Chemical mapping of a 177-nucleotide RNA with DMS.
Source: RMDB library OK2TRN, as collected in RNAgym.
RNA sequence: GGGAACGACUCGAGUAGAGUCGAAAAGAAAGGCAGCAAGUGCAGCCCACGCAGAGGCAUGCUUUUGCAUGCCCAGUCGAGCCCACGACUAAGGGCAGCUGCGACACUGAGGGCAGCUGCCGAAAGACCAUUAGGGACGGUUCGCCGUCCCUAAUGGAAAAGAAACAACAACAACAAC
Reactivity to DMS in 0.01 (KOAc 150mM, MgCl2 10mM, bicine 150mM(pH8.5), 24C), signal-to-noise 3, nucleotides 027 to 126: g020a130a090a170g000g040c030a050g000c010a150a100g000u020g010c080a070g000c000c050c040a110c220g010c140a110g010a140g030g020c000a050u010g010c000u000u010u000u010g020c020a050u000g000c000c010c030a020g000u000c010g000a100g000c000c000c000a300c050g000a040c030u040a180a090g010g000g010c000a070g000c000u000g030c010g000a120c160a150c230u020g000a130g000g000g030c000a040g020c000u000g010c000c000g000a030a080a120g010a180
The DMS profile rests on 1,984 reads.
Values cover nucleotides 27 to 126.